[RMDB]
RNA sequence: GGGAACGACUCGAGUAGAGUCGAAAAGAGGCGAAAUAAUUCCCAUCUCCUAUGUACGGCCGGAGAUGGGUAUGGCCGUACUAAUAAGCCUCAUAGUGACGAGAGUCACGAAUUCUGGAUAGCCUGUGGUAGUCGGCUAUCCUAUGACUACCGUAGACCACCGAUGAUAGUUCGCUAUCAUCGGUGGAAAAGAAACAACAACAACAAC
Reactivity to 2A3 in 0.01 (KOAc 150mM, MgCl2 10mM, bicine 150mM(pH8.5), 24C), signal-to-noise 1, nucleotides 027 to 156: g010a010g000g020c060g030a100a040a150u280a020a060u070u020c000c000c000a020u020c020u020c000c040u080a080u140g000u020a040c050g000g010c010c000g080g010a120g010a070u170g050g000g130u000a000u040g020g000c000c000g000u000a020c000u000a000a090u050a090a030g000c000c000u000c000a000u060a040g010u000g000a000c030g000a000g050a010g100u000c000a000c000g000a000a060u200u070c010u050g060g000a040u010a000g000c090c070u020g040u080g020g090u060a130g000u070c050g020g000c000u000a010u010c000c050u050a140u090g020a000c000u130a030c140c070g060u050a050g010a060